Chemical mapping of a 177-nucleotide RNA with DMS and 2A3. The RNA was probed in 150 mM KOAc, 10 mM MgCl2 and 150 mM bicine (pH 8.5) at 24 C. It was measured as part of the RMDB library OK2TRN.
[RMDB]
RNA sequence: GGGAACGACUCGAGUAGAGUCGAAAAAAGAGGGGCCCAGCCCAUUGGAGGUGGCCCCACGUCCUUCAGUGCCUGGAGUUCUUGUCCUUCAGAGUGGGCUGGGGGUGGAGCUGGACAUCCUGAAAACUACAGCUACAUUUUUCGAAAUGUAGCUGUAAAAAGAAACAACAACAACAAC
Reactivity to DMS in 0.01 (KOAc 150mM, MgCl2 10mM, bicine 150mM(pH8.5), 24C), signal-to-noise 3, nucleotides 027 to 126: a070a070g000a100g030g010g020g000c010c020c070a090g010c030c010c070a190u000u010g020g020a050g010g010u000g000g010c000c000c000c000a000c040g000u010c020c000u000u010c080a080g010u000g010c090c030u020g000g000a040g020u010u000c070u010u000g010u010c080c010u000u000c020a060g010a160g030u010g000g010g010c010u000g020g010g010g010g010u000g010g010a090g010c040u000g010g000a100c080a080u000c020c030u000g010a070a070a080a120c240
Reactivity to 2A3 in 0.01 (KOAc 150mM, MgCl2 10mM, bicine 150mM(pH8.5), 24C), signal-to-noise 1, nucleotides 027 to 126: a020a030g110a020g000g000g000g000c000c010c040a020g030c000c040c000a090u060u300g100g000a130g010g020u070g020g020c010c010c010c000a000c000g010u040c000c000u040u110c060a050g070u030g130c000c000u010g000g010a030g000u130u070c040u230u140g110u170c000c030u050u030c020a020g080a030g190u080g000g030g000c000u000g000g000g000g000g000u060g010g020a040g030c040u030g000g070a020c030a060u070c000c000u050g030a160a060a060a000c080